[RMDB]
RNA sequence: GGGAACGACUCGAGUAGAGUCGAAAAGCGCGUAUUUCGGAGCAUGUGUUUCGGGGGCAGGCAUGGCUACAUAAAGCUAGAGAAGUGGGUCGAAGUGGGGCGUAAAGCAAGGACGGUCCAAGGGCGAGUCGACCUCUCCAUCGGCACGAGGACGUGCGAAUAGGUUACACUUCGGUGUAACCUAUUCAAAAGAAACAACAACAACAAC
Reactivity to DMS in 0.01 (KOAc 150mM, MgCl2 10mM, bicine 150mM(pH8.5), 24C), signal-to-noise 2, nucleotides 027 to 156: g000c040g000c030g030u000a130u000u000u000c000g020g010a090g000c010a080u000g030u000g030u010u010u000c040g020g040g010g020g090c030a080g050g010c080a130u000g010g000c030u000a160c140a100u000a080a080a100g030c000u010a080g020a110g000a090a140g020u000g030g040g000u010c040g050a060a130g040u000g030g030g030g000c090g030u000a030a030a170g010c130a120a070g000g030a090c050g040g030u000c040c040a120a070g000g010g010c080g000a120g030u000c040g000a040c030c050u000c030u000c040c030a120u000c100g030g030c010a040c050g010a110g010g050a080c030g030u000g010c130
Reactivity to 2A3 in 0.01 (KOAc 150mM, MgCl2 10mM, bicine 150mM(pH8.5), 24C), signal-to-noise 3, nucleotides 027 to 156: g000c010g000c030g020u060a110u070u090u080c040g050g020a030g010c060a090u120g020u010g030u090u140u130c090g020g010g000g020g000c020a010g030g010c030a050u070g010g000c010u030a000c020a050u210a080a140a020g030c020u030a040g010a000g010a160a050g030u130g000g000g040u050c050g020a090a040g050u100g020g000g060g000c010g020u080a100a070a010g020c030a020a020g090g020a010c040g010g080u010c040c030a020a030g030g000g000c010g000a000g000u000c000g020a090c010c000u050c020u000c020c020a100u140c070g030g000c020a000c020g010a020g020g030a030c030g000u020g020c000